This 177-nucleotide RNA was probed chemically with 2A3 and DMS.
The RNA was probed in 150 mM KOAc, 10 mM MgCl2 and 150 mM bicine (pH 8.5) at 24 C.
For 2A3, 10,388 sequencing reads were counted.
Reactivities are given for positions 27 through 126.
For DMS, 13,184 sequencing reads were counted.
High 2A3 reactivity points to a flexible backbone, as in loops and unpaired stretches.
[RMDB]
RNA sequence: GGGAACGACUCGAGUAGAGUCGAAAAAAGUUGCACCAGGUACGGAUACCAGACGUUGCCAAAGAGGGUGACAUGAGGAUCACCCAUGUACUGUCCCUUGGCAGCCGUACCUGGUGCUGGUGAAAAACGUGAUAAGUCUAUUCGUAGACUUAUCACGAAAAGAAACAACAACAACAAC
Reactivity to 2A3 in 0.01 (KOAc 150mM, MgCl2 10mM, bicine 150mM(pH8.5), 24C), signal-to-noise 6, nucleotides 027 to 126: a000a020g260u130u040g000c000a000c010c000a000g010g010u010a010c000g020g010a060u060a160c020c010a030g050a100c070g110u120u050g020c020c010a080a070a030g160a070g000g000g010u020g020a010c010a040u170g070a220g080g070a120u140c050a240c040c000c000a000u030g010u020a130c030u070g090u110c000c010c000u000u020g000g000c020a010g010c000c010g000u010a010c000c000u000g000g010u010g000c000u000g000g000u070g020a120a020a010a010a000
Reactivity to DMS in 0.01 (KOAc 150mM, MgCl2 10mM, bicine 150mM(pH8.5), 24C), signal-to-noise 7, nucleotides 027 to 126: a070a070g000u000u000g000c000a010c000c000a010g000g010u000a010c000g000g000a110u010a130c110c070a110g010a070c170g010u010u000g010c020c030a030a050a100g010a120g010g000g010u000g000a030c010a080u000g000a110g030g000a190u010c200a080c010c000c000a020u000g000u000a060c090u010g010u010c010c040c030u000u000g000g010c010a080g010c000c000g010u000a010c010c000u000g000g010u000g000c000u000g000g010u000g010a060a050a060a070a110